[RMDB]
RNA sequence: GGGAACGACUCGAGUAGAGUCGAAAACCAGCAAGAGGCGUGGAGAGAGGGCCGCGGUGCUCUGGAGUAGAGGCUCUGCCUUCGAAACACCAUCGAUCGUCCCUUCUUCUUUACCUUCUUCUGGCUCUUCCGAUGAGACGCGACCGGUGGCAUCACCCCGUCUUAAGCUGUUCGCAGCUUAAGACGGAAAAGAAACAACAACAACAAC
Reactivity to 2A3 in 0.01 (KOAc 150mM, MgCl2 10mM, bicine 150mM(pH8.5), 24C), signal-to-noise 1, nucleotides 027 to 156: c000c000a000g030c180a000a000g000a010g030g010c140g040u030g020g010a010g000a000g010a000g000g010g010c010c000g020c000g010g000u000g000c000u000c010u010g010g000a000g010u010a000g020a010g000g030c050u110c280u300g040c030c040u170u160c010g010a000a000a010c010a020c140c060a000u010c000g070a300u050c020g000u010c000c010c010u060u010c010u100u000c000u010u010u020a000c000c000u000u000c000u010u010c000u000g000g020c030u040c020u080u000c010c020g020a050u090g050a040g010a020c080g020c070g100a060c040c070g050g000u030g000g060c060a040u060c010a070c000c010

Chemical mapping of a 207-nucleotide RNA with 2A3. Conditions: 150 mM KOAc, 10 mM MgCl2 and 150 mM bicine (pH 8.5), 24 C. Reactivities are rounded to 0.1 and cut off at 0 and 3. Values cover nucleotides 27 to 156.